[RMDB]
RNA sequence: GGGAACGACUCGAGUAGAGUCGAAAAGCCCUGCAAAGGGUACCUGCCGCGACUAUAAACAAAGAAUGUGGGUAUUAAAUCGCAAGUCAGCUCUGGAGCUGGCCACACUUUCGAAUUGCGGGGACUCCCUAAAGCUCGAUUCUACCAACCAGCCGGGGAUACUGAUUCACUUCGGUGAAUCAGUAUCAAAAGAAACAACAACAACAAC
Reactivity to 2A3 in 0.01 (KOAc 150mM, MgCl2 10mM, bicine 150mM(pH8.5), 24C), signal-to-noise 3, nucleotides 027 to 156: g010c000c010c010u000g030c030a070a100a050g070g020g000u020a030c000c010u030g040c010c010g080c030g040a030c090u160a070u110a300a120a050c150a060a080a030g100a060a130u080g000u030g010g010g000u020a050u030u170a140a150a090u140c040g000c030a030a050g020u030c020a010g000c030u050c120u190g140g050a050g000c010u020g000g010c020c000a020c010a000c000u050u030u030c020g030a140a100u060u000g000c000g000g000g000g020a030c020u040c020c000c010u060a050a090a030g020c020u000c020g040a030u120u000c010u060a080c050c020a150a010c000c020a020g060c040c050g040g000g020